[RMDB]
RNA sequence: GGGAACGACUCGAGUAGAGUCGAAAAACAGCCGAUGAAAAAGGCUACCAUUGCCCAAACUGUGGAAAUUCAAAUCCUGAAACCAGUGACGUUACCCGCCGGAUCUGCGGUUAUCUUGGCAAUCCAAGUGAUGAAUGUGUUUCGACACAUUCAUCACAAAAGAAACAACAACAACAAC
Reactivity to 2A3 in 0.01 (KOAc 150mM, MgCl2 10mM, bicine 150mM(pH8.5), 24C), signal-to-noise 2, nucleotides 027 to 126: a000c040a030g000c020c020g050a130u270g190a070a070a010a010a000g000g010c020u000a030c010c040a090u040u140g020c020c000c000a030a140a020c060u080g010u110g070g050a030a070a070u100u070c060a010a100a140u050c010c010u100g040a100a020a050c030c010a010g000u000g070a030c020g000u010u030a080c030c000c000g020c000c000g000g020a090u020c010u090g030c000g020g000u010u050a060u000c060u050u070g030g060c030a020a030u000c050c000a100a030
Reactivity to DMS in 0.01 (KOAc 150mM, MgCl2 10mM, bicine 150mM(pH8.5), 24C), signal-to-noise 3, nucleotides 027 to 126: a090c180a030g040c000c000g000a140u010g000a060a080a180a190a200g000g000c000u000a120c070c060a100u000u000g030c020c010c060a080a110a060c120u010g000u000g010g010a070a080a100u000u000c120a060a060a130u010c060c020u010g000a050a100a130c080c030a010g000u000g010a070c060g000u000u000a060c030c020c000g000c070c060g000g000a120u010c070u010g000c040g010g010u010u000a090u010c050u000u010g040g000c100a050a100u010c030c010a080a130